RNA sequence: GGGAACGACUCGAGUAGAGUCGAAAAAACAAAAAUAACUGUAAACAACACAGAUUACGCUCCAGCUUACGCUAAAGCUGCGUGAGUUAAUCUCCUUUUGGAGCUGGACUGAUUAGAAUUUCUAGCGUUUUAAUCGCUCCAUAACCUUAAGCUAGACCUCUAUGUUCGACUUCGGUCGAACAUAGAGAAAAGAAACAACAACAACAAC
Reactivity to 2A3 in 0.01 (KOAc 150mM, MgCl2 10mM, bicine 150mM(pH8.5), 24C), signal-to-noise 2, nucleotides 027 to 156: a000a000c120a080a080a030a000a000u140a050a060c030u060g040u120a100a100a140c090a090a080c050a020c000a030g080a130u050u250a050c060g010c000u020c010c000a030g000c010u000u020a010c010g000c040u140a300a130a110g090c190u100g010c040g000u010g000a000g000u010u030a020a050u060c010u090c060c030u010u120u100u070g000g000a000g010c010u000g000g000a010c020u030g010a010u010u000a000g010a040a020u130u110u020c000u000a000g000c000g010u020u000u000u000a010a010u000c000g000c050u000c010c010a160u140a230a140c020c030u150u080a070a000g000c000u000a000g000a000c010
Annotation: The data come from the RNA Mapping Database (RMDB), library RSTRND. Chemical mapping of a 207-nucleotide RNA with 2A3. 2A3 adducts were read by reverse transcription with SuperScript II with manganese. Conditions: 150 mM KOAc, 10 mM MgCl2 and 150 mM bicine (pH 8.5), 24 C.